An RNA of 177 nucleotides, treated with DMS and 2A3 and read out base by base. It was measured as part of the RMDB library M2PK90. 2A3 adducts were read by reverse transcription with SuperScript II with manganese. The RNA was probed in 150 mM KOAc, 10 mM MgCl2 and 150 mM bicine (pH 8.5) at 24 C. For DMS the reverse transcriptase was MarathonRT.
RNA sequence: GGGAACGACUCGAGUAGAGUCGAAAAUAAGAGCAUGUACGAAUCACGAUAUGAGAGUUCCUGGUGAAUCCCGGGUACAAGGAAAGGUAUUAAUCUCCCACUGCGUUCGCUUGCAGUAGGGAUAUAAUACAUCUGUGGAAUUCGUUCCACAGAUGUAAAAAGAAACAACAACAACAAC
Reactivity to DMS in 0.01 (KOAc 150mM, MgCl2 10mM, bicine 150mM(pH8.5), 24C), signal-to-noise 5, nucleotides 027 to 126: u000a080a120g000a080g010c050a040u000g010u000a040c040g010a090a070u000c060a040c050g020a120u010a120u000g000a090g000a220g010u010u000c000c010u010g030g010u000g020a080a100u010c050c010c000g010g010g010u000a040c070a090a050g000g000a060a040a070g000g000u010a050u010u010a070a080u000c100u000c000c000c000a050c000u000g010c000g020u010u000c260g010c240u000u010g010c000a000g010u000a040g020g000g000a030u000a010u000a050a130
Reactivity to 2A3 in 0.01 (KOAc 150mM, MgCl2 10mM, bicine 150mM(pH8.5), 24C), signal-to-noise 3, nucleotides 027 to 126: u150a010a050g040a010g040c090a050u080g020u100a030c080g050a070a060u080c050a010c050g040a060u040a080u280g080a070g000a010g050u040u010c010c000u030g050g020u030g040a060a050u010c000c010c000g050g000g020u050a010c020a030a000g060g020a090a030a020g070g000u060a030u090u100a140a080u020c020u010c040c000c000a000c010u030g000c010g050u080u140c090g020c290u090u120g000c010a000g010u060a120g000g000g000a010u010a000u000a060a010